[RMDB]
RNA sequence: GGGAACGACUCGAGUAGAGUCGAAAAUGCGCGGUCGUGCGCUAGCAGGCGCAUCAGGUGAUGCGCAGUGCCAGAUUUUUUGCACGCAUCUGGGUGCUGAACUAGUCUCUAUCGCAGGGCAGUACUGACUAUAUAGUCCAUUCGUGGACUAUAUAGUAAAAGAAACAACAACAACAAC
Reactivity to 2A3 in 0.01 (KOAc 150mM, MgCl2 10mM, bicine 150mM(pH8.5), 24C), signal-to-noise 9, nucleotides 027 to 126: u100g000c040g000c020g030g050u070c030g030u030g010c040g000c020u000a010g000c040a020g060g000c020g010c020a030u020c010a050g300g150u300g090a020u020g000c000g000c040a010g030u010g020c000c010a020g040a120u100u080u030u040u150u260g060c050a020c060g030c010a030u010c030u060g110g010g030u060g020c010u030g010a050a030c010u010a040g050u040c010u000c010u050a060u070c030g000c060a030g040g050g000c010a010g030u060a060c030u070g060
Reactivity to DMS in 0.01 (KOAc 150mM, MgCl2 10mM, bicine 150mM(pH8.5), 24C), signal-to-noise 9, nucleotides 027 to 126: u000g010c060g020c060g010g010u000c050g020u000g010c050g010c030u000a030g010c060a110g010g000c010g000c000a010u000c010a230g020g020u010g010a020u000g010c010g010c020a020g010u000g010c020c050a050g000a050u000u000u000u010u010u010g020c040a040c050g010c110a060u000c040u000g010g010g010u000g010c020u000g000a080a110c130u000a100g010u010c030u000c040u000a070u000c070g010c060a090g000g000g000c030a050g010u000a070c060u000g010

Annotation:
The record gives the reactivity of an RNA of 177 nucleotides to 2A3 and DMS. It was measured as part of the RMDB library OK2TST. Values cover nucleotides 27 to 126. For DMS, 92,446 sequencing reads were counted.